[RMDB]
An RNA of 207 nucleotides, treated with 2A3 and read out base by base. The data come from the RNA Mapping Database (RMDB), library OK3TST. 2A3 adducts were read by reverse transcription with SuperScript II with manganese. The 2A3 profile rests on 758 reads.
RNA sequence: GGGAACGACUCGAGUAGAGUCGAAAACGACCUGCACGAGUGCGUGCAGGUCGAAGGGAGUGGUGACACUCUCAAGCACGUCAACUAUAAGCGCCCAUUAUAGUACAAACACAUAAAGCCCCGAUAUGUGUAGACGUGCAAGGGCGAACGGGGCAAAUAUGCUCCAUUAGUUCGCUAAUGGAGCAUAAAAAGAAACAACAACAACAAC
Reactivity to 2A3 in 0.01 (KOAc 150mM, MgCl2 10mM, bicine 150mM(pH8.5), 24C), signal-to-noise 1, nucleotides 027 to 156: c010g000a000c000c000u040g050c000a000c090g090a160g300u300g160c120g040u000g050c000a010g000g000u000c000g000a000a020g000g000g000a010g020u020g000g030u010g010a020c000a000c010u000c030u040c000a000a030g000c000a010c000g000u000c000a010a020c050u030a050u000a020a070g100c080g150c130c000c000a000u020u000a010u020a000g010u090a080c070a020a180a020c010a000c000a000u010a000a050a000g010c000c000c000c000g020a000u000a000u020g010u070g000u000a010g010a010c000g000u000g000c010a030a110g120g020g060c110g020a070a000c000g000g000g000g000c000a000a000a030